[RMDB]
Structure probing data (DMS and 2A3) for a 177-nucleotide construct. For 2A3 the reverse transcriptase was SuperScript II with manganese. Reactivities are rounded to 0.1 and cut off at 0 and 3. Reactivities are given for positions 27 through 126. The reactions ran in a buffer of 150 mM KOAc, 10 mM MgCl2 and 150 mM bicine (pH 8.5), at 24 C. Source: RMDB library OK2TST, as collected in RNAgym. For 2A3, 3,340 sequencing reads were counted.

RNA sequence: GGGAACGACUCGAGUAGAGUCGAAAACGUCGUGGCGAGCUCCGACCGGGCCCCGGCCGAGAGUUCGGCGCUGCCGAGAUCGCGGGCCAGUGCCUCGAUCCCGGUGCUGAGCCGCUGCGCGGGGUCAUACGUUUUACUACUUCGGUAGUAAAACGUAAAAAGAAACAACAACAACAAC
Reactivity to DMS in 0.01 (KOAc 150mM, MgCl2 10mM, bicine 150mM(pH8.5), 24C), signal-to-noise 3, nucleotides 027 to 126: c070g010u000c050g050u000g000g010c020g000a170g000c020u000c030c070g010a050c030c050g020g010g010c110c040c020c030g010g020c000c040g000a130g000a090g000u000u000c020g010g010c010g010c170u010g010c020c010g000a030g000a030u000c020g030c160g020g010g010c020c090a140g010u010g020c030c020u000c050g000a060u000c020c010c010g010g000u010g010c020u000g000a040g010c020c020g010c040u000g010c010g020c030g000g000g010g010u000c060a190
Reactivity to 2A3 in 0.01 (KOAc 150mM, MgCl2 10mM, bicine 150mM(pH8.5), 24C), signal-to-noise 3, nucleotides 027 to 126: c030g030u050c010g020u040g050g020c050g060a120g020c050u000c020c020g030a040c000c010g050g000g020c030c020c020c020g030g040c030c030g110a090g010a010g080u060u040c010g000g000c140g020c170u180g000c020c010g020a040g010a020u050c050g000c100g280g000g020c010c060a120g080u130g120c000c010u030c040g010a020u040c000c000c000g000g010u170g050c010u010g020a010g000c010c020g040c050u030g020c060g030c020g000g010g000g010u020c030a020